[RMDB]
RNA sequence: GGGAACGACUCGAGUAGAGUCGAAAAGCGCGCGAGAGGCGGGACGAUUGUUUGUCGUCGUCGUCGAGGACGGCGUGGGCGGAGUCGGGGUGCUUACCGUGGUUCUACGGAGGUACUCUCCGCGCGGCGAGGCUUUAAGAUUCGUCUUAAAGCCUCGAAAAGAAACAACAACAACAAC
Reactivity to 2A3 in 0.01 (KOAc 150mM, MgCl2 10mM, bicine 150mM(pH8.5), 24C), signal-to-noise 1, nucleotides 027 to 126: g000c000g000c000g000c090g020a070g010a020g050g030c060g000g060g090a000c010g030a030u000u090g100u110u090u250g030u050c000g000u000c010g050u040c030g000u010c020g040a020g030g080a010c000g000g000c000g000u080g010g000g040c060g020g040a110g030u040c030g000g010g000g030u060g000c010u030u080a230c010c000g030u010g020g180u180u070c010u050a000c000g000g000a000g000g000u040a040c020u010c000u020c010c000g000c000g000c000g000g030
Reactivity to DMS in 0.01 (KOAc 150mM, MgCl2 10mM, bicine 150mM(pH8.5), 24C), signal-to-noise 2, nucleotides 027 to 126: g020c020g010c020g000c100g010a050g010a140g020g010c100g000g000g010a030c000g000a090u000u000g010u000u000u000g000u000c010g010u000c010g000u010c010g020u000c070g000a220g000g000a070c010g010g000c030g010u020g010g010g000c050g010g000a300g000u010c070g000g010g010g020u010g000c060u020u010a100c010c000g020u000g010g010u000u010c110u010a020c000g000g010a070g000g000u000a100c020u000c010u000c040c030g030c000g030c000g020g010
This 177-nucleotide RNA was probed chemically with 2A3 and DMS.
The reactions ran in a buffer of 150 mM KOAc, 10 mM MgCl2 and 150 mM bicine (pH 8.5), at 24 C.
For DMS, 3,044 sequencing reads were counted.
Values cover nucleotides 27 to 126.